[RMDB]
RNA sequence: GGGAACGACUCGAGUAGAGUCGAAAACAGACAGAACAGUCGGUGGAGCGGUGAAAUGCGUAGAGAUCGACUGGAAUGCCGAUGGCGAAGGCGGUCUGCUGGGGAUCAUCUGACGCUGAGGCACGAACAAGAAUUACAUCUUCGGAUGUAAUUCUUGAAAAGAAACAACAACAACAAC
Reactivity to DMS in 0.01 (KOAc 150mM, MgCl2 10mM, bicine 150mM(pH8.5), 24C), signal-to-noise 5, nucleotides 027 to 126: c050a130g010a120c150a160g020a160a150c040a040g000u000c020g000g000u010g010g010a090g010c040g000g000u000g010a070a130a100u010g010c010g020u010a120g000a260g000a020u000c010g000a020c030u000g010g010a150a110u010g000c020c000g000a190u000g010g000c020g010a240a110g000g010c300g010g010u000c000u000g020c120u030g000g010g000g000a030u000c020a010u000c010u000g010a190c040g030c020u000g010a260g010g010c010a030c100g000a060a150
Reactivity to 2A3 in 0.01 (KOAc 150mM, MgCl2 10mM, bicine 150mM(pH8.5), 24C), signal-to-noise 4, nucleotides 027 to 126: c010a010g210a040c030a020g150a180a030c010a000g020u000c010g000g010u010g000g020a040g010c030g000g060u120g080a110a050a020u150g020c070g080u290a020g010a000g000a070u010c000g010a010c020u000g010g030a050a020u050g000c000c010g100a160u230g020g000c010g010a010a010g010g000c010g000g000u010c010u020g050c130u160g170g050g000g000a000u000c010a010u000c010u050g080a100c010g000c030u040g030a030g000g020c030a010c040g020a030a020